[RMDB]
Annotation: This 177-nucleotide RNA was probed chemically with 2A3 and DMS. In probing experiments dimethyl sulfate is read out at A N1 and C N3, which are open when not base-paired. The reactions ran in a buffer of 150 mM KOAc, 10 mM MgCl2 and 150 mM bicine (pH 8.5), at 24 C. Source: RMDB library TTRDES, as collected in RNAgym. For DMS the reverse transcriptase was MarathonRT.
RNA sequence: GGGAACGACUCGAGUAGAGUCGAAAAGAUAUGGACCGACCAAGGGAGCUGGACAUCGGAAACGAUGUCUCAGCGAGGAUCUUGUGUCGGUCCUAAGUCAAAACUAACGAGGUUCGCCUCGUUAGAAGUACACAAUAAUCUUCGGAUUAUUGUGUACAAAAGAAACAACAACAACAAC
Reactivity to 2A3 in 0.01 (KOAc 150mM, MgCl2 10mM, bicine 150mM(pH8.5), 24C), signal-to-noise 6, nucleotides 027 to 126: g000a000u040a020u100g010g000a000c000c010g000a000c000c000a010a000g070g040g030a220g020c000u010g010g000a000c000a010u010c000g010g010a060a030a020c010g010a000u010g010u000c030u040c020a000g000c010g020a030g020g030a110u030c000u030u120g080u050g010u070c010g000g000u000c000c000u000a000a000g000u000c010a000a000a020a070c010u010a000a000c000g000a000g000g050u110u120c300g140c080c000u000c010g000u000u000a000g000a010a010
Reactivity to DMS in 0.01 (KOAc 150mM, MgCl2 10mM, bicine 150mM(pH8.5), 24C), signal-to-noise 7, nucleotides 027 to 126: g000a040u010a300u010g000g000a010c000c010g010a020c000c010a020a010g010g000g010a070g030c010u000g000g000a010c000a010u000c000g010g000a090a080a190c000g010a010u000g010u000c000u010c020a000g020c010g010a070g010g010a050u000c000u000u000g010u020g020u000c000g020g010u010c000c000u000a000a070g010u000c030a120a090a120a240c000u000a000a000c000g000a010g010g010u000u020c300g010c000c000u000c000g010u000u000a000g000a030a130